[RMDB]
RNA sequence: GGGAACGACUCGAGUAGAGUCGAAAACACUGGGGCACUCAUUUAGCAGGCAGAUGUUUGUUGAAGACUAGGCGUUUGCCCGGUCCUGUGCUGGUCAGUGGAUGUGGGGGAAGAGGUGGUGAUGUAAACCUUUUAUUUAUUUCGAUAAAUAAAAGGUAAAAGAAACAACAACAACAAC
Reactivity to DMS in 0.01 (KOAc 150mM, MgCl2 10mM, bicine 150mM(pH8.5), 24C), signal-to-noise 9, nucleotides 027 to 126: c050a060c050u000g010g010g000g010c020a030c030u010c180a130u000u000u000a050g010c030a050g010g010c020a150g010a080u010g010u010u000u000g010u000u000g010a080a100g000a040c030u000a050g010g010c010g020u010u010u020g010c000c000c020g010g010u000c030c170u000g020u000g010c030u000g000g010u010c040a040g010u000g010g000a080u010g010u010g010g010g000g000g000a060a060g010a080g010g010u010g000g010u000g000a070u010g000u010a080a110
Reactivity to 2A3 in 0.01 (KOAc 150mM, MgCl2 10mM, bicine 150mM(pH8.5), 24C), signal-to-noise 5, nucleotides 027 to 126: c020a000c020u030g000g000g050g000c010a020c020u070c030a080u050u060u100a030g000c030a010g040g000c030a020g050a300u200g100u030u070u020g030u020u080g060a050a020g020a020c010u030a030g000g030c040g090u110u180u280g000c020c000c000g000g000u040c010c010u050g010u030g000c010u060g010g120u070c020a020g010u010g030g030a100u130g050u120g040g020g000g000g020a050a040g020a030g060g020u100g010g040u060g020a080u100g010u100a160a110
Chemical mapping of a 177-nucleotide RNA with DMS and 2A3. DMS adducts were read by reverse transcription with MarathonRT. Values are in units of 0.01, from 0 to 300, in steps of 10. The DMS profile rests on 33,835 reads. The reactions ran in a buffer of 150 mM KOAc, 10 mM MgCl2 and 150 mM bicine (pH 8.5), at 24 C.